[RMDB]
RNA sequence: GGGAACGACUCGAGUAGAGUCGAAAAUUUUGCGAUUUCAGCCAUCGGUAGUUUUUGGCGCAACACGGUCACGAAAGCCAUCGCCAGACCGACUAAUCCACCAUAUACCAAUGAAGUACCAACAUUAUCACUCGUAUGGAUUCGUCCAUACGAGUGAAAAAGAAACAACAACAACAAC
Reactivity to 2A3 in 0.01 (KOAc 150mM, MgCl2 10mM, bicine 150mM(pH8.5), 24C), signal-to-noise 2, nucleotides 027 to 126: u150u100u100u090g000c060g040a080u000u060u130c090a010g010c010c020a060u040c010g030g030u040a090g040u100u010u030u080u140g030g000c030g000c010a050a040c070a010c070g040g040u070c020a010c120g090a150a000a010g040c040c010a070u020c010g000c020c010a020g010a090c000c010g000a010c020u030a020a080u050c000c000a020c010c010a050u070a030u070a170c020c000a050a050u100g040a120a040g050u010a050c000c050a060a030c020a100u090u130a080
Reactivity to DMS in 0.01 (KOAc 150mM, MgCl2 10mM, bicine 150mM(pH8.5), 24C), signal-to-noise 3, nucleotides 027 to 126: u020u000u000u020g010c060g000a090u000u000u000c090a080g000c100c050a040u010c050g000g000u000a070g020u000u000u010u000u010g020g020c030g000c110a070a120c220a120c130g010g000u000c060a130c120g010a030a050a090g010c100c060a070u000c070g010c030c040a090g000a120c080c030g010a080c140u000a060a100u010c040c020a060c010c020a040u000a060u010a090c030c050a040a060u010g000a040a070g010u000a090c070c030a060a160c140a070u000u000a100